Structure probing data (DMS and 2A3) for a 177-nucleotide construct. For DMS the reverse transcriptase was MarathonRT.
RNA sequence: GGGAACGACUCGAGUAGAGUCGAAAAGCACAGCUUUCCGUCAUGAUCUCGUGCGCGAAGGUCCGCGCGGCAGUAUGUGGGCCGCGCACCGUGACAGCGACGGCGCCGUCACCGGCUGGGAGGAACGGCGAUGAUGAUAUUUCGAUAUCAUCAUCGCAAAAGAAACAACAACAACAAC
Reactivity to DMS in 0.01 (KOAc 150mM, MgCl2 10mM, bicine 150mM(pH8.5), 24C), signal-to-noise 4, nucleotides 027 to 126: g030c060a090c130a110g000c040u000u000u000c000c010g030u010c010a130u010g010a140u010c020u020c150g020u020g020c040g010c030g020a150a100g020g000u020c030c030g040c020g010c050g010g010c160a100g020u020a090u030g030u000g010g000g000c000c000g000c000g020c000a000c050c040g040u020g010a060c050a110g010c120g000a050c030g000g010c300g010c030c010g000u000c070a070c020c020g000g000c040u000g000g000g000a080g000g010a120a100c070g000
Reactivity to 2A3 in 0.01 (KOAc 150mM, MgCl2 10mM, bicine 150mM(pH8.5), 24C), signal-to-noise 8, nucleotides 027 to 126: g060c030a020c040a230g010c030u020u060u040c020c010g030u040c020a070u060g130a300u020c020u020c030g040u050g020c020g000c030g080a170a030g030g010u010c030c010g020c000g000c030g100g000c040a090g060u260a170u280g030u090g040g030g000c000c000g000c010g000c000a000c000c060g030u030g010a020c020a030g030c040g110a030c020g020g020c000g000c000c010g060u070c010a060c130c040g040g000c020u050g010g020g030a040g030g030a060a040c050g030
The RNA was probed in 150 mM KOAc, 10 mM MgCl2 and 150 mM bicine (pH 8.5) at 24 C.